[RMDB]
RNA sequence: GGGAACGACUCGAGUAGAGUCGAAAACUUAAGGCCAAAAUGGAUUGGUCAAGGAGGUUUGAAAUGUGAUGCCCUACAUUUCAAUAAUUGAUUUAAGCACGGGUUCAUUUUGGGUCACGAGGUCCUAACUCCGGGCUGAUUUCGAUCAGCCCGGAGUAAAAGAAACAACAACAACAAC
Reactivity to 2A3 in 0.01 (KOAc 150mM, MgCl2 10mM, bicine 150mM(pH8.5), 24C), signal-to-noise 1, nucleotides 027 to 126: c030u090u000a140a220g030g000c000c000a070a000a000a000u020g000g000a000u000u090g300g020u060c070a000a000g180g020a040g070g090u000u000u070g000a000a000a000u000g030u100g100a070u280g110c000c000c040u070a000c000a000u000u000u000c000a000a000u220a030a020u090u070g080a030u060u000u190a020a000g080c070a010c040g080g000g040u000u010c000a000u000u000u060u060g270g000g000u020c000a020c100g010a000g000g060u000c000c000u040a140